[RMDB]
RNA sequence: GGGAACGACUCGAGUAGAGUCGAAAAAGACAUACGUUCGCGUAUGUCUGACGGGCACCUCACCCUAAGGAAAUGCUCUAUGACAGGACACACUGAUUGUGAUACCUCGAGAUUUCGAUCUCGAGAAUAAGUAACUACACUUCGGUGUAGUUACUUAAAAAGAAACAACAACAACAAC
Reactivity to 2A3 in 0.01 (KOAc 150mM, MgCl2 10mM, bicine 150mM(pH8.5), 24C), signal-to-noise 4, nucleotides 027 to 126: a000g000a000c000a000u010a010c010g040u030u070c240g000c010g120u010a000u000g010u000c010u000g000a030c020g010g000g020c020a030c010c020u030c040a100c010c000c030u020a060a030g030g040a110a090a080u080g000c010u010c020u060a140u160g090a040c030a050g060g040a030c010a000c000a000c070u080g120a290u140u080g040u020g050a050u110a150c010c000u000c010g000a010g000a000u060u110u200c240g050a020u000c010u000c010g000a000g000a000a010
Reactivity to DMS in 0.01 (KOAc 150mM, MgCl2 10mM, bicine 150mM(pH8.5), 24C), signal-to-noise 7, nucleotides 027 to 126: a000g010a020c000a010u000a010c000g010u000u020c230g030c010g020u000a000u000g000u000c000u000g000a070c190g010g000g010c040a070c030c010u010c070a140c030c010c030u000a100a070g020g000a070a080a100u000g000c030u000c020u000a080u010g010a160c090a040g000g000a090c050a050c040a040c070u010g000a100u010u000g010u000g000a140u010a090c170c000u000c000g000a010g000a020u000u010u010c160g010a020u000c000u000c000g000a010g000a070a070
An RNA of 177 nucleotides, treated with 2A3 and DMS and read out base by base. Values cover nucleotides 27 to 126. 2A3 adducts were read by reverse transcription with SuperScript II with manganese.